Structure probing data (2A3) for a 177-nucleotide construct.
The data come from the RNA Mapping Database (RMDB), library RFM100.
The reactions ran in a buffer of 150 mM KOAc, 10 mM MgCl2 and 150 mM bicine (pH 8.5), at 24 C.
For 2A3 the reverse transcriptase was SuperScript II with manganese.
For 2A3, 639 sequencing reads were counted.
RNA sequence: GGGAACGACUCGAGUAGAGUCGAAAAAUGGCUGCUCAGUGCUGUGUUGUCGUUCCCCCUGCUCAGAACAAUUGUUUCUUAACUAUACCUGUCUGCUGUCUACCUGUAGCAGCCAGGGACGCUUGGUAAUAUCAGUCGUCUUCGGACGACUGAUAUUAAAAGAAACAACAACAACAAC
Reactivity to 2A3 in 0.01 (KOAc 150mM, MgCl2 10mM, bicine 150mM(pH8.5), 24C), signal-to-noise 2, nucleotides 027 to 126: a000u080g010g020c020u030g000c030u090c040a080g080u070g050c010u030g030u050g090u200u250g040u040c020g020u000u010c030c030c000c010c000u000g000c010u040c030a010g080a110a000c080a110a200u080u040g020u010u010u000c000u060u040a130a030c000u000a040u070a120c000c000u000g040u040c000u010g000c030u050g020u150c060u090a210c020c080u130g000u040a000g020c000a010g000c000c000a000g000g000g020a010c000g010c030u060u060g120g000u030